[RMDB]
Chemical mapping of a 177-nucleotide RNA with DMS and 2A3. Source: RMDB library OK2TST, as collected in RNAgym.
RNA sequence: GGGAACGACUCGAGUAGAGUCGAAAACUUGAUCACCAGUUCGGCCAGGCCCUGUUGGAAUCGCAUCACCACGUGCGCCGCCUGGCUGGCCAGGGUCAUUGGGUACAUCAGGAUGGUUCGUGGCAGCCGAGUUAUCUGGGUUCGCCCAGAUAACUCGAAAAGAAACAACAACAACAAC
Reactivity to DMS in 0.01 (KOAc 150mM, MgCl2 10mM, bicine 150mM(pH8.5), 24C), signal-to-noise 2, nucleotides 027 to 126: c050u000u010g010a050u000c050a140c020c020a110g010u010u000c050g000g000c020c010a010g010g060c030c100c070u010g000u010u000g030g000a190a100u010c050g010c020a040u000c150a150c150c080a050c100g020u000g020c010g010c140c080g020c020c030u010g000g020c020u000g020g010c020c070a080g000g010g000u000c030a060u000u010g020g010g020u010a080c100a090u000c060a060g010g010a070u000g010g010u010u010c060g030u000g010g010c080a030g000c080
Reactivity to 2A3 in 0.01 (KOAc 150mM, MgCl2 10mM, bicine 150mM(pH8.5), 24C), signal-to-noise 1, nucleotides 027 to 126: c010u000u050g010a000u050c030a070c150c060a060g000u220u210c010g000g040c010c000a010g000g070c010c030c030u240g160u150u260g020g090a140a100u150c020g000c000a030u020c020a020c080c010a070c110g020u040g000c030g000c000c020g000c000c010u020g000g000c010u000g000g020c000c020a090g020g000g040u020c010a040u090u100g070g000g030u100a090c060a090u040c020a090g110g050a080u080g060g000u040u110c060g060u050g000g040c040a010g000c000